[RMDB]
RNA sequence: GGGAACGACUCGAGUAGAGUCGAAAAUAACUUGGUUGCUGUGACUACCAACUGUAGUCGCAGCAUUAGAGCCCAACCCAGUAGGUCAUCUUCCUGAGGCUUGACUGCGGCUUAACUGGACGUUUGCCCAGGGGUUAGAUCUCCAGGCAGGAAACUACGGACCUAUGGUAUUCGUACCAUAGGUCCGAAAAGAAACAACAACAACAAC
Reactivity to 2A3 in 0.01 (KOAc 150mM, MgCl2 10mM, bicine 150mM(pH8.5), 24C), signal-to-noise 2, nucleotides 027 to 156: u180a030a010c040u050u010g060g000u050u040g030c000u000g000u000g000a000c000u000a010c000c140a210a080c160u180g020u000a000g000u000c000g000c010a020g030c000a000u000u000a010g000a000g000c000c000c000a030a110c000c000c000a070g080u080a010g040g050u060c050a180u020c160u190u110c000c050u130g010a080g080g040c000u080u070g040a040c030u100g000c090g000g010c010u120u080a160a050c050u070g060g010a050c060g040u010u070u040g000c010c030c010a100g020g040g000g010u050u090a090g010a260u050c010u000c000c000a000g030g050c040a030g010g110a040a070a090c110u220a000